[RMDB]
RNA sequence: GGGAACGACUCGAGUAGAGUCGAAAAAGCGGAAGAACGCUGGUACGGCUUCCAGCGGGACGGUCGCGCCCGCCGACGGCAAUCCGAGGAUGACGAAGAUCAACAUGCUGACCAACAGGCCCAUCGACAAUACAGACGAGUUCGCUCGUCUGUAUUGAAAAGAAACAACAACAACAAC
Reactivity to DMS in 0.01 (KOAc 150mM, MgCl2 10mM, bicine 150mM(pH8.5), 24C), signal-to-noise 6, nucleotides 027 to 126: a090g000c010g000g000a090a040g010a260a180c040g000c010u000g000g000u020a060c080g010g000c060u010u010c030c030a060g000c020g000g000g010a130c250g000g010u010c020g010c060g010c020c010c030g020c030c060g020a110c090g000g000c080a040a070u010c010c020g010a140g010g000a060u010g020a060c070g010a090a070g000a070u020c060a080a100c100a060u010g010c040u000g000a090c020c050a090a060c120a070g000g010c000c000c010a080u030c070g000a200
Reactivity to 2A3 in 0.01 (KOAc 150mM, MgCl2 10mM, bicine 150mM(pH8.5), 24C), signal-to-noise 8, nucleotides 027 to 126: a000g030c030g030g030a050a030g020a130a020c010g000c020u010g010g020u090a080c070g090g010c040u100u030c020c000a000g010c000g000g010g010a030c050g020g040u070c020g000c020g040c020c000c000g000c000c010g060a090c030g000g010c050a030a050u030c020c020g020a040g070g010a050u100g020a020c080g040a040a060g010a100u070c040a040a050c010a040u130g030c020u040g020a070c010c000a030a060c020a040g070g000c020c000c000a080u100c020g010a020

Chemical mapping of a 177-nucleotide RNA with DMS and 2A3. The reactions ran in a buffer of 150 mM KOAc, 10 mM MgCl2 and 150 mM bicine (pH 8.5), at 24 C. The DMS profile rests on 13,270 reads. Values cover nucleotides 27 to 126. The 2A3 profile rests on 12,103 reads. The data come from the RNA Mapping Database (RMDB), library OK1LIB. For DMS the reverse transcriptase was MarathonRT.